Background
An RNA of 177 nucleotides, treated with 2A3 and DMS and read out base by base. The 2A3 profile rests on 1,049 reads. The DMS profile rests on 1,640 reads. The data come from the RNA Mapping Database (RMDB), library OK2TST. The reactions ran in a buffer of 150 mM KOAc, 10 mM MgCl2 and 150 mM bicine (pH 8.5), at 24 C.
RNA sequence: GGGAACGACUCGAGUAGAGUCGAAAAAUCAACGGUGCGGGCGUGGCCCGCGACGCGGCCGGGCGCGGCCUCAAGGUGGUGCUGGCAGAAAAGGACGAUCUGGCGCAAGGCACAUCAUCGCGCUCCAAUACUCGCUAAUCUUCGGAUUAGCGAGUAUAAAAGAAACAACAACAACAAC
Reactivity to 2A3 in 0.01 (KOAc 150mM, MgCl2 10mM, bicine 150mM(pH8.5), 24C), signal-to-noise 1, nucleotides 027 to 126: a000u050c020a020a040c030g070g000u070g030c060g000g000g000c210g140u190g040g150c000c060c000g040c000g000a010c040g000c070g030g000c000c020g020g000g000c020g000c010g030g010c000c040u090c090a050a070g000g010u040g030g130u040g020c080u030g060g000c030a020g080a020a220a030a000g170g050a040c080g020a060u010c010u030g000g050c030g000c100a050a050g040g000c010a010c000a020u090c020a010u060c010g000c000g010c000u030c010c010a070
Reactivity to DMS in 0.01 (KOAc 150mM, MgCl2 10mM, bicine 150mM(pH8.5), 24C), signal-to-noise 2, nucleotides 027 to 126: a120u000c050a100a220c040g010g000u010g000c020g020g000g020c020g050u030g000g030c010c000c000g050c040g000a000c030g040c300g000g000c000c010g030g010g000c000g020c030g010g000c010c040u010c210a080a090g010g040u000g000g010u000g020c010u010g000g020c040a040g000a020a030a110a110g010g010a070c170g000a080u010c020u000g000g000c060g000c110a140a050g010g000c030a030c020a010u000c010a080u000c000g000c010g020c000u000c010c300a140